[RMDB]
RNA sequence: GGGAACGACUCGAGUAGAGUCGAAAAGAUAUGGAUUAGAGCAACAGCUAACGUAACAUCGUUUCGGAAACGAAACGUGGUUAGACAUGCUCGAAGUCCUAAGUCAAAACUACAGUUCGCUGUAGAAGCUUUCAGUCACGUUCGCGUGACUGAAAGCAAAAGAAACAACAACAACAAC
Reactivity to 2A3 in 0.01 (KOAc 150mM, MgCl2 10mM, bicine 150mM(pH8.5), 24C), signal-to-noise 1, nucleotides 027 to 126: g020a000u060a020u130g010g000a070u300u000a040g000a010g000c020a020a150c090a100g040c020u100a030a000c020g180u100a080a050c050a290u240c030g020u000u000u010c070g010g000a070a030a060c000g000a030a000a030c020g010u010g000g010u010u020a000g030a020c000a060u150g000c000u000c010g010a000a000g000u000c000c000u040a120a000g040u000c050a110a000a150a120c040u020a010c010a000g040u010u130c180g060c130u040g010u020a040g000a170a070
Reactivity to DMS in 0.01 (KOAc 150mM, MgCl2 10mM, bicine 150mM(pH8.5), 24C), signal-to-noise 1, nucleotides 027 to 126: g030a070u000a300u070g010g000a020u010u000a300g050a000g030c000a050a180c300a190g000c010u000a000a000c000g010u000a010a070c160a090u000c000g020u000u040u000c000g000g010a080a030a300c000g000a010a020a030c000g090u000g000g000u000u000a000g000a040c060a210u000g000c000u000c000g000a050a080g000u000c000c010u030a030a260g040u000c020a100a090a030a280c010u000a020c000a000g060u000u000c300g010c000u000g000u000a000g000a110a180